[RMDB]
RNA sequence: GGGAACGACUCGAGUAGAGUCGAAAAGAUAUGGAUGUUACAGGGAGCUCUCUUCGGAAACGAAACGUGAGAGCGACGAUCUGUUACAUCCUAAGUCAAAACCCAUGAAAGUUCGCUUUCAUGGGAACGAUGGAGGAUAGUUCGCUAUCCUCCAUCGAAAAGAAACAACAACAACAAC
Reactivity to DMS in 0.01 (KOAc 150mM, MgCl2 10mM, bicine 150mM(pH8.5), 24C), signal-to-noise 3, nucleotides 027 to 126: g000a050u000a300u000g010g010a010u000g000u000u000a010c010a010g000g000g000a040g000c010u000c000u000c010u000u000c000g000g000a100a050a140c030g010a020a060a200c250g010u000g020a030g000a010g010c000g010a060c230g020a080u000c000u020g010u000u000a020c000a000u000c000c000u010a030a080g000u000c000a120a070a100a160c000c000c000a000u000g000a000a000a010g010u000u010c300g000c000u000u000u000c000a010u000g000g000g000a000a010
Reactivity to 2A3 in 0.01 (KOAc 150mM, MgCl2 10mM, bicine 150mM(pH8.5), 24C), signal-to-noise 3, nucleotides 027 to 126: g040a010u070a030u140g010g000a000u000g000u030u050a010c010a010g000g030g050a030g000c010u030c000u010c000u130u170c050g030g090a060a140a070c060g070a080a110a050c170g150u160g030a020g000a000g020c000g000a020c010g000a040u000c010u010g000u020u020a000c020a000u000c000c000u000a030a000g000u000c010a000a050a120a210c010c000c000a010u010g030a010a010a010g070u180u230c270g050c160u040u000u000c000a000u000g010g000g000a020a050
Structure probing data (DMS and 2A3) for a 177-nucleotide construct. It was measured as part of the RMDB library TTRDEL. The 2A3 profile rests on 6,521 reads.